[RMDB]
RNA sequence: GGGAACGACUCGAGUAGAGUCGAAAAGAUCUGCGCCGAUCCGAAACGCUAGCAAACAGCCCGCAUCAUGUCGUCUCCUAACUUCGACGUGGUGACAUACUGAGCUUAUGCGAGUAAGCCUGUUAGCAAUAGAUCAGAACGUUCGCGUUCUGAUCAACAAUUUAUACGGCUUCGGCCGUAUAAAUUGAAAAGAAACAACAACAACAAC
Reactivity to 2A3 in 0.01 (KOAc 150mM, MgCl2 10mM, bicine 150mM(pH8.5), 24C), signal-to-noise 6, nucleotides 027 to 156: g020a020u010c030u080g030c050g040c060c050g030a050u030c030c040g060a090a050a030c060g000c030u040a020g030c050a060a040a100c020a050g050c040c020c030g020c000a010u000c000a000u020g000u010c000g040u000c060u100c070c090u130a170a170c060u090u050c030g010a000c000g010u000g010g000u010g030a010c010a010u140a050c040u040g010a020g010c000u030u030a010u090g090c030g020a050g070u010a010a020g010c000c010u050g010u060u060a020g000c040a090a110u040a210g000a010u000c000a000g000a000a000c000g010u070u080c220g000c000g090u000u000c030u000g000a000u000c000a000a000
Reactivity to DMS in 0.01 (KOAc 150mM, MgCl2 10mM, bicine 150mM(pH8.5), 24C), signal-to-noise 3, nucleotides 027 to 156: g010a070u000c000u000g010c070g030c060c030g010a090u000c060c040g020a100a090a060c080g000c020u000a030g040c030a070a080a190c110a130g020c040c030c060g020c000a030u000c030a040u000g020u000c000g020u010c100u030c120c050u000a050a110c100u000u010c000g020a030c020g030u000g000g020u000g020a060c090a150u000a120c040u010g010a110g010c000u000u000a160u000g010c220g000a230g020u010a070a090g000c020c030u000g030u000u000a120g010c000a050a110u000a140g000a040u000c000a000g000a000a000c010g010u000u010c280g020c030g050u000u010c010u000g010a000u000c000a030a140